Conditions: 150 mM KOAc, 10 mM MgCl2 and 150 mM bicine (pH 8.5), 24 C. The record gives the reactivity of an RNA of 177 nucleotides to DMS and 2A3. The DMS profile rests on 4,886 reads. For DMS the reverse transcriptase was MarathonRT. 2A3 adducts were read by reverse transcription with SuperScript II with manganese. Values cover nucleotides 27 to 126.
[RMDB]
RNA sequence: GGGAACGACUCGAGUAGAGUCGAAAAGGCGAUGCCGAGUUGACUUUACAUAAGCUUGUUGAUUUGAUGUCAAGUGAUAGUGCAGUUACUGUCACACACACAACUGCAUGUGAUAAGUGCGCUAAAGUCUGCCCUAUAGAUUCGUCUAUAGGGCAGAAAAAGAAACAACAACAACAAC
Reactivity to DMS in 0.01 (KOAc 150mM, MgCl2 10mM, bicine 150mM(pH8.5), 24C), signal-to-noise 5, nucleotides 027 to 126: g020g000c000g000a160u010g020c010c020g000a100g010u000u000g000a100c030u000u000u000a140c070a090u010a110a130g020c090u010u000g010u000u000g010a130u010u010u010g010a120u000g010u010c100a070a080g010u000g000a080u010a040g010u000g000c060a110g000u000u010a070c070u000g010u000c020a020c060a080c140a060c070a090c090a020a070c100u000g000c040a060u000g000u000g010a090u000a020a080g010u010g010c060g010c080u000a040a100a100g000
Reactivity to 2A3 in 0.01 (KOAc 150mM, MgCl2 10mM, bicine 150mM(pH8.5), 24C), signal-to-noise 4, nucleotides 027 to 126: g000g000c040g050a030u060g000c020c010g000a000g020u040u030g060a050c000u050u080u080a030c030a070u120a030a110g040c040u070u060g030u070u030g090a290u070u060u150g130a160u070g060u090c080a110a070g010u010g030a050u020a050g030u020g040c050a090g080u110u100a040c030u010g000u030c010a010c000a000c000a000c000a000c010a160a060c070u080g030c070a070u040g010u010g040a040u020a070a040g060u020g070c050g000c060u080a120a010a030g080